[RMDB]
RNA sequence: GGGAACGACUCGAGUAGAGUCGAAAAGAUAUGGACCCUAACGCUAAAGGGAGACCUACUACUUUCCCACAUCGGAAACGAUGUGCAAGUACUAGGUCGAAGAACUUUAGCGUUAGGGUCCUAAGUCCGGUGAAAAGGUGUUCGCACCUUUUCACCGAAAAGAAACAACAACAACAAC
Reactivity to DMS in 0.01 (KOAc 150mM, MgCl2 10mM, bicine 150mM(pH8.5), 24C), signal-to-noise 1, nucleotides 027 to 126: g010a070u000a300u010g010g000a040c010c000c000u000a000a030c000g040c000u000a000a000a000g000g010g050a080g020a000c000c000u000a000c210u000a020c010u000u000u010c300c300c030a010c010a010u020c000g070g000a110a240a230c020g010a020u000g010u000g080c200a010a000g000u000a020c100u000a000g000g050u000c000g010a140a090g010a130a200c000u000u000u000a010g010c000g040u000u000a000g000g010g000u000c000c000u010a020a050g010u000c030
This 177-nucleotide RNA was probed chemically with DMS.
For DMS, 892 sequencing reads were counted.
The RNA was probed in 150 mM KOAc, 10 mM MgCl2 and 150 mM bicine (pH 8.5) at 24 C.